[RMDB]
RNA sequence: GGGAACGACUCGAGUAGAGUCGAAAAACCUCGUAAAUCCAUCUGCAAACCAAAUAAACGCCAACGACGACGUUUACGCACUGGCCGCUUAAGCCGGCCGGCCUCUGAUCAGCAGCUCGCUUACAAGCGGCUGGUUGGGGGUAACCCAAUUGUAAGCGCUUUUAGAAUAGUUCGCUAUUCUAAAAGCAAAAGAAACAACAACAACAAC
Reactivity to 2A3 in 0.01 (KOAc 150mM, MgCl2 10mM, bicine 150mM(pH8.5), 24C), signal-to-noise 1, nucleotides 027 to 156: a000c000c020u080c000g040u040a090a080a090u030c030c010a110u080c060u150g070c060a100a080a140c050c020a080a080a020u100a000a110a030c020g070c020c030a100a050c120g130a020c040g020a020c010g070u000u070u070a060c070g000c000a040c040u010g000g000c010c000g060c070u210u120a130a000g030c060c000g000g000c000c000g000g000c020c000u020c020u010g000a010u000c000a010g010c000a000g000c000u020c080g000c010u040u020a000c000a000a030g000c000g000g000c030u000g020g000u020u010g020g000g020g000g000u000a040a020c110c000c010a010a080u040u000g000u050a040a000g000c030
The record gives the reactivity of an RNA of 207 nucleotides to 2A3. For 2A3, 601 sequencing reads were counted. Conditions: 150 mM KOAc, 10 mM MgCl2 and 150 mM bicine (pH 8.5), 24 C.